This 177-nucleotide RNA was probed chemically with DMS and 2A3. The reactions ran in a buffer of 150 mM KOAc, 10 mM MgCl2 and 150 mM bicine (pH 8.5), at 24 C. For 2A3, 2,329 sequencing reads were counted. For DMS, 1,236 sequencing reads were counted.
RNA sequence: GGGAACGACUCGAGUAGAGUCGAAAACCCCUGCCUUGAUGAAAUGCAUGUUCAGUCCGUGUUUCAGCUGACCACCCUGAUUAUACACAUGCGCUGAGCAGGAGAAACUGAGCGGUUCGCCGCUCAGGGUACACCUAGACUUCGGUCUAGGUGUACCAAAAGAAACAACAACAACAAC
Reactivity to DMS in 0.01 (KOAc 150mM, MgCl2 10mM, bicine 150mM(pH8.5), 24C), signal-to-noise 2, nucleotides 027 to 126: c020c000c000c110u000g010c040c070u000u020g010a150u010g000a060a110a070u010g000c020a080u000g030u010u000c020a020g030u000c100c210g020u010g000u000u000u000c060a100g020c040u000g000a100c300c040a050c050c150c000u010g000a040u010u000a130u010a110c180a060c000a050u000g010c150g000c020u000g010a080g000c020a010g010g010a170g010a060a070a290c000u010g010a010g000c040g000g000u000u000c130g020c000c000g000c000u000c000a000g000
Reactivity to 2A3 in 0.01 (KOAc 150mM, MgCl2 10mM, bicine 150mM(pH8.5), 24C), signal-to-noise 3, nucleotides 027 to 126: c000c010c000c000u010g010c010c030u120u150g110a140u130g050a190a090a100u140g030c030a020u000g010u010u030c030a010g020u050c030c040g030u010g060u040u100u090c090a090g020c050u090g070a080c030c020a090c010c020c010u010g020a030u040u150a090u060a190c060a010c000a040u030g010c030g030c040u030g020a000g000c020a010g010g060a150g100a010a110a000c000u000g000a000g000c000g030g020u000u060c190g010c060c030g000c000u010c000a000g000